[RMDB]
RNA sequence: GGGAACGACUCGAGUAGAGUCGAAAACGUGAAAUUGCCGCCCUUUGGAUCACUUUUCUGUGCGGGGCUUUUCUCAACAAAACAGUCCAGUGGGGUAUGGCUUUGCAUAUCCAGUGCAUAAUUUUUGUUCGUACUAUUCUUUCGAGAAUAGUACGAAAAAAGAAACAACAACAACAAC
Reactivity to 2A3 in 0.01 (KOAc 150mM, MgCl2 10mM, bicine 150mM(pH8.5), 24C), signal-to-noise 8, nucleotides 027 to 126: c060g090u110g100a080a060a140u130u120g000c010c000g010c010c000c000u050u040u030g030g000a040u110c030a040c010u080u050u090u100c090u060g050u050g050c160g020g000g000g030c000u090u030u180u070c010u000c010a010a040c010a010a040a010a020c020a010g010u000c000c010a050g030u110g050g010g000g010u080a180u210g010g010c020u030u040u040g000c000a010u020a040u070c020c020a030g010u010g050c020a050u050a170a220u140u050u060u040u140g130
Reactivity to DMS in 0.01 (KOAc 150mM, MgCl2 10mM, bicine 150mM(pH8.5), 24C), signal-to-noise 5, nucleotides 027 to 126: c140g010u010g010a030a110a060u020u010g020c010c010g000c010c000c010u000u020u010g000g000a060u010c120a140c150u020u000u010u010c150u020g030u010g000c160g020g000g000g010c300u010u000u020u020c010u000c020a090a040c060a040a040a040a050c170a170g000u000c010c000a020g010u010g020g020g000g010u010a060u040g020g000c020u000u000u000g000c020a010u000a080u020c040c060a140g010u010g010c060a060u030a080a070u010u010u020u010u010g000
An RNA of 177 nucleotides, treated with 2A3 and DMS and read out base by base. The data come from the RNA Mapping Database (RMDB), libraries RFM100 and RFMREP. Values cover nucleotides 27 to 126.